An RNA of 207 nucleotides, treated with 2A3 and DMS and read out base by base.

RNA sequence: GGGAACGACUCGAGUAGAGUCGAAAAUUGAAAUUGAACCGUCCUGUUAUCGAAAGAUAGGCAGAAGAUACUAAAUGUGUGACAGCAUGGGAAGUAAAGGCAGACCGUGGUUCCCUUGAGUAUCUUAAUUAGGGGGACGAGUUCGCUCGUCCCCCAACAGGUAUAGGUACUUCGGUACCUAUACCUGAAAAGAAACAACAACAACAAC
Reactivity to 2A3 in 0.01 (KOAc 150mM, MgCl2 10mM, bicine 150mM(pH8.5), 24C), signal-to-noise 1, nucleotides 027 to 156: u130u100g030a020a000a030u040u120g020a150a080c010c010g000u020c010c010u000g010u000u080a030u060c040g010a090a070a010g010a000u010a040g030g100c030a040g020a050a000g000a000u010a020c030u030a000a100a140u100g080u010g060u070g080a010c010a060g120c000a100u080g030g000g020a000a030g100u090a200a110a040g100g000c020a020g070a060c040c000g040u040g010g070u010u020c000c000c000u020u000g000a060g000u010a000u050c010u010u040a070a100u230u300a220g000g000g030g000g010a000c000g000a000g000u020u050c100g010c060u040c000g000u000c000c000c000c000c000a000a000
Reactivity to DMS in 0.01 (KOAc 150mM, MgCl2 10mM, bicine 150mM(pH8.5), 24C), signal-to-noise 2, nucleotides 027 to 156: u000u010g010a010a150a150u010u000g050a070a170c020c020g040u010c030c010u000g000u000u000a090u000c050g010a180a160a160g020a040u000a050g000g020c020a070g000a100a020g000a080u000a050c050u000a030a090a030u000g020u000g020u000g010a090c050a090g000c030a050u020g020g000g010a080a110g030u000a030a100a120g000g030c050a030g010a200c050c050g000u000g000g010u000u000c050c000c000u020u000g020a080g010u000a050u000c000u000u000a040a100u000u000a180g000g030g040g020g020a030c000g040a010g020u000u000c150g000c010u010c000g010u010c000c020c000c000c000a000a000
The data come from the RNA Mapping Database (RMDB), library M2RFPK. Reactivities are given for positions 27 through 156. DMS adducts were read by reverse transcription with MarathonRT. 2A3 adducts were read by reverse transcription with SuperScript II with manganese. The reactions ran in a buffer of 150 mM KOAc, 10 mM MgCl2 and 150 mM bicine (pH 8.5), at 24 C. As a SHAPE reagent, 2A3 marks flexible, mostly unpaired nucleotides at the ribose 2'-OH.